[RMDB]
RNA sequence: GGGAACGACUCGAGUAGAGUCGAAAAUUUUGAGCUUUCGAGCUCAAAACAAGUGGUGUCCCGACCAGGAAAAACAGAUUUACACGAAGUGAAAGAUCGAAAGGGCCACCAUGUUCGCAUGGUGGAACCAGUUAUAGUAUUUCGAUACUAUAACUGGAAAAGAAACAACAACAACAAC
Reactivity to 2A3 in 0.01 (KOAc 150mM, MgCl2 10mM, bicine 150mM(pH8.5), 24C), signal-to-noise 7, nucleotides 027 to 126: u010u010u000u010g010a010g000c010u040u050u180c260g110a000g010c000u000c000a000a010a000a000c050a080a060g140u040g100g000u010g030u010c010c010c000g010a010c010c000a020g170g060a070a110a010a020a010c050a040g060a050u080u090u170a040c090a020c130g180a300a050g020u040g070a130a080a040g030a040u050c040g050a090a060a050g070g030g000c000c000a000c010c000a000u000g020u030u030c160g000c100a000u000g000g000u000g010g010a000a010
Reactivity to DMS in 0.01 (KOAc 150mM, MgCl2 10mM, bicine 150mM(pH8.5), 24C), signal-to-noise 7, nucleotides 027 to 126: u000u000u010u000g000a010g010c010u000u000u010c170g010a020g010c000u000c000a000a000a010a030c200a120a120g020u000g010g010u000g000u000c000c000c010g000a090c020c010a180g010g000a040a050a060a070a070c120a110g000a050u000u000u000a270c050a060c030g010a110a120g020u000g010a050a100a140g010a020u010c020g000a050a090a090g000g000g000c000c000a000c000c000a010u000g000u000u020c180g020c000a000u000g000g010u000g000g000a040a070
This 177-nucleotide RNA was probed chemically with 2A3 and DMS. Reactivities are given for positions 27 through 126. The DMS profile rests on 9,977 reads. For DMS the reverse transcriptase was MarathonRT. Source: RMDB library M2PK50, as collected in RNAgym.